[RMDB]
RNA sequence: GGGAACGACUCGAGUAGAGUCGAAAACAUCCGUAGAGCCAUCCAUGCUGAACAGCUAGCCAUCCAUGGAUGGGAGUGAGAACGCACGGAGUGAGGGAUGGUCCAUCCUCCAUCCGCCUGAGCGCGUUCCUCGUGAUCCGAUAAGGCCCAUCCCUUCUACCUAACGCUUGUUCGCAAGCGUUAGGUAAAAAGAAACAACAACAACAAC
Reactivity to 2A3 in 0.01 (KOAc 150mM, MgCl2 10mM, bicine 150mM(pH8.5), 24C), signal-to-noise 2, nucleotides 027 to 156: c030a060u030c000c010g020u040a060g050a090g220c010c000a030u000c000c000a020u030g000c050u130g110a150a130c040a060g010c070u130a030g030c020c080a030u000c000c000a010u000g010g000a010u000g000g010g010a000g030u170g020a120g000a040a020c000g020c020a010c020g040g010a080g030u050g050a080g010g040g000a010u000g040g010u040c070c000a130u030c020c000u000c010c010a040u010c000c010g050c010c090u070g070a070g070c080g000c030g020u000u010c040c010u030c010g050u090g040a030u000c030c020g060a100u050a200a030g020g020c000c000c000a010u040c000c000c000u040u060c030
This 207-nucleotide RNA was probed chemically with 2A3. The reactions ran in a buffer of 150 mM KOAc, 10 mM MgCl2 and 150 mM bicine (pH 8.5), at 24 C. The 2A3 profile rests on 868 reads. High 2A3 reactivity points to a flexible backbone, as in loops and unpaired stretches.